Structure probing data (DMS and 2A3) for a 177-nucleotide construct. It was measured as part of the RMDB library TTRDEL.
RNA sequence: GGGAACGACUCGAGUAGAGUCGAAAAGAUAUGGAUUCUUGGACCGUUACUGACGACGAAGUCGGAAACGACAGAGUCAGGAACGCUAGAAUCCUAAGUCAAACUGUUCGGGUUCGCCCGAACAGAAGCUAUAGCGAUUGUUCGCAAUCGCUAUAGCAAAAGAAACAACAACAACAAC
Reactivity to DMS in 0.01 (KOAc 150mM, MgCl2 10mM, bicine 150mM(pH8.5), 24C), signal-to-noise 4, nucleotides 027 to 126: g000a040u010a300u000g000g020a000u000u000c000u000u010g030g000a090c300c020g000u000u000a030c000u020g000a020c000g020a150c250g000a060a080g000u000c010g010g000a070a060a150c010g000a030c000a030g010a180g010u000c000a010g010g000a000a010c000g000c010u000a000g010a030a000u000c000c000u010a030a110g000u000c020a110a110a160c010u000g000u000u000c000g010g010g000u000u010c230g000c000c000c000g000a010a000c010a000g000a060a060
Reactivity to 2A3 in 0.01 (KOAc 150mM, MgCl2 10mM, bicine 150mM(pH8.5), 24C), signal-to-noise 1, nucleotides 027 to 126: g010a010u060a070u150g000g000a010u010u010c020u050u150g110g100a210c130c040g000u000u040a040c010u010g010a020c020g040a040c030g090a140a040g020u020c030g000g040a090a090a040c000g000a000c010a020g050a000g010u000c000a000g000g000a030a000c010g000c020u000a000g010a000a000u000c000c000u020a100a010g050u020c030a040a040a120c010u000g010u000u010c000g000g000g010u050u070c300g080c030c000c000g000a000a000c000a000g000a010a010
The RNA was probed in 150 mM KOAc, 10 mM MgCl2 and 150 mM bicine (pH 8.5) at 24 C.
The 2A3 profile rests on 8,985 reads.
For DMS, 3,610 sequencing reads were counted.